[RMDB]
RNA sequence: GGGAACGACUCGAGUAGAGUCGAAAAAGCUUGAGAAUCGGGUGGCUUCGUCACCUGAAUUGUAGUCUGGAGAGGCGUCCUCAGCGACGGACCGGGCCCAAGUUCCCUGGAAAGGGACGCCUGGGAGCAUAAUGUAGCUCUUCGGAGCUACAUUAUGAAAAGAAACAACAACAACAAC
Reactivity to 2A3 in 0.01 (KOAc 150mM, MgCl2 10mM, bicine 150mM(pH8.5), 24C), signal-to-noise 9, nucleotides 027 to 126: a000g050c030u080u070g040a030g070a140a100u050c010g000g000g010u010g010g010c050u220u150c270g040u020c000a010c000c000u000g030a020a010u030u040g060u040a050g030u020c040u030g040g020a100g020a030g070g030c000g020u020c010c000u050c050a040g030c060g100a050c050g040g030a030c010c020g010g020g000c010c050c010a010a020g030u070u040c010c000c000u010g060g060a140a090a070g030g000g000a000c010g010c010c000u000g010g020g020a070g040
Reactivity to DMS in 0.01 (KOAc 150mM, MgCl2 10mM, bicine 150mM(pH8.5), 24C), signal-to-noise 8, nucleotides 027 to 126: a090g010c040u010u000g010a130g010a100a080u010c010g020g000g020u000g000g000c020u030u030c220g010u000c000a000c010c000u010g000a020a040u020u010g010u010a080g000u000c020u000g000g010a200g000a060g000g000c020g010u000c020c010u010c080a110g010c090g000a090c090g010g000a100c020c020g010g000g020c020c060c040a030a050g010u010u000c000c000c000u000g010g030a090a110a120g000g000g000a020c030g010c020c010u000g000g010g000a120g010